Structure probing data (2A3 and DMS) for a 207-nucleotide construct.
The data come from the RNA Mapping Database (RMDB), library OK3TST.
RNA sequence: GGGAACGACUCGAGUAGAGUCGAAAAGGGUGCUGAUCAUUUGGGCUCAUGAUAGUUGAUGAGUAAAUAAUCAGGAAUUUUUGCAAACCAGUUGUUAAACUAUCGGUGGCUUGAUAUCAGCUGUGACGGGCAUAUUUACACCACAGAAAUUGGCAAAGAGUACUGAUAUAUUCGUAUAUCAGUACUCAAAAGAAACAACAACAACAAC
Reactivity to 2A3 in 0.01 (KOAc 150mM, MgCl2 10mM, bicine 150mM(pH8.5), 24C), signal-to-noise 4, nucleotides 027 to 156: g060g010g020u070g010c020u010g020a020u040c060a070u070u090u130g030g010g000c030u030c070a040u070g050a040u020a060g040u080u050g040a070u030g030a040g090u120a040a090a090u090a050a050u120c040a030g060g050a070a050u080u080u120u230u160g050c060a030a060a070c020c030a040g030u030u020g010u050u140a070a050a040c020u030a020u040c020g030g070u030g000g010c030u000u050g010a020u020a010u050c040a010g000c010u020g020u020g020a030c060g000g000g000c010a020u030a030u060u060u060a040c060a010c020c030a010c010a020g090a060a110a080u130u120g040g000c050a060a050a090
Reactivity to DMS in 0.01 (KOAc 150mM, MgCl2 10mM, bicine 150mM(pH8.5), 24C), signal-to-noise 2, nucleotides 027 to 156: g000g000g050u010g030c020u000g000a030u010c050a110u000u000u000g040g040g030c010u000c050a090u000g010a080u000a080g010u000u000g010a080u020g000a180g000u000a070a050a060u000a040a080u020c040a140g020g020a160a130u000u000u000u000u010g010c030a070a140a100c050c030a230g010u000u000g020u010u000a070a050a050c030u010a080u000c030g030g050u000g030g010c020u000u000g010a050u000a050u000c050a080g040c010u000g010u000g020a080c090g000g000g020c050a110u000a050u000u010u010a090c060a060c020c010a070c080a080g000a040a080a100u010u010g010g020c080a070a070a210

Notes:
2A3 adducts were read by reverse transcription with SuperScript II with manganese. The RNA was probed in 150 mM KOAc, 10 mM MgCl2 and 150 mM bicine (pH 8.5) at 24 C.